Structure probing data (DMS and 2A3) for a 177-nucleotide construct. Source: RMDB library OK2TRN, as collected in RNAgym. For DMS the reverse transcriptase was MarathonRT. The RNA was probed in 150 mM KOAc, 10 mM MgCl2 and 150 mM bicine (pH 8.5) at 24 C. For DMS, 1,323 sequencing reads were counted.

[RMDB]
RNA sequence: GGGAACGACUCGAGUAGAGUCGAAAACUGGGCGCUCUCUGGCGGUGAAGAUUACGAGUUGUGUUUCACUGUGCCGGAACUGAACCGUGGCGCGCUGGAUGUGGCUCUCGGACACCUGGGCGUACCGAGACUGCUCCAUAUUCGUAUGGAGCAGUCUAAAAGAAACAACAACAACAAC
Reactivity to DMS in 0.01 (KOAc 150mM, MgCl2 10mM, bicine 150mM(pH8.5), 24C), signal-to-noise 1, nucleotides 027 to 126: c060u010g000g020g010c050g000c040u000c080u000c000u000g010g020c020g000g010u000g010a000a050g000a130u000u000a090c040g010a240g010u010u010g040u000g000u000u010u010c010a030c040u000g010u000g050c020c000g010g010a080a100c190u000g000a090a070c100c080g020u010g040g030c030g010c020g010c080u000g010g010a040u010g040u010g000g000c040u000c030u000c020g010g010a130c100a070c030c060u010g000g000g010c040g020u000a090c020c000g000
Reactivity to 2A3 in 0.01 (KOAc 150mM, MgCl2 10mM, bicine 150mM(pH8.5), 24C), signal-to-noise 1, nucleotides 027 to 126: c070u030g010g000g000c010g040c000u020c000u020c030u070g020g000c050g000g010u010g050a000a030g060a120u300u300a080c050g070a100g300u090u150g050u080g000u040u020u000c000a000c000u030g020u090g150c000c000g000g010a010a010c020u090g100a060a010c000c020g040u050g020g010c080g010c010g030c060u070g060g010a140u140g030u050g050g050c000u130c030u000c010g050g010a060c060a010c110c050u140g010g000g070c020g000u030a170c000c010g010